[RMDB]
RNA sequence: GGGAACGACUCGAGUAGAGUCGAAAAACUCACUGUCAUGUAGGAAAUUUUGCUGAGCUGGACAUGAAGUUACCACCGAAGUUACCUGCAUUGAGGCCAGCCUUAUGUGGCACAUAUUUAAUGAAGAUAUACUGAACUAAUUCGUUAGUUCAGUAUAAAAAGAAACAACAACAACAAC
Reactivity to DMS in 0.01 (KOAc 150mM, MgCl2 10mM, bicine 150mM(pH8.5), 24C), signal-to-noise 9, nucleotides 027 to 126: a080c030u000c030a140c180u000g010u000c040a030u010g010u010a050g010g010a100a080a140u010u000u000u000g010c060u000g000a120g010c040u010g010g010a240c130a060u010g010a080a080g010u000u000a060c050c050a100c120c110g010a060a080g010u000u010a050c060c020u000g000c040a040u000u000g010a220g000g000c030c030a050g010c030c030u010u000a040u000g020u000g010g010c030a060c200a060u010a070u010u000u010a070a070u010g010a100a070g000a190
Reactivity to 2A3 in 0.01 (KOAc 150mM, MgCl2 10mM, bicine 150mM(pH8.5), 24C), signal-to-noise 7, nucleotides 027 to 126: a000c020u030c020a050c050u030g030u060c010a030u020g020u040a020g040g120a070a140a150u160u180u100u100g000c020u030g010a060g070c010u030g030g050a020c020a070u070g020a040a010g040u040u070a050c020c060a050c050c080g060a070a020g010u030u020a050c010c010u050g050c030a030u020u090g020a030g030g000c000c010a020g010c010c010u090u080a100u080g060u060g020g120c050a000c020a050u260a170u090u290u170a180a160u170g070a060a030g030a030
Conditions: 150 mM KOAc, 10 mM MgCl2 and 150 mM bicine (pH 8.5), 24 C. This 177-nucleotide RNA was probed chemically with DMS and 2A3. Source: RMDB library OK2TRN, as collected in RNAgym. Reactivities are given for positions 27 through 126.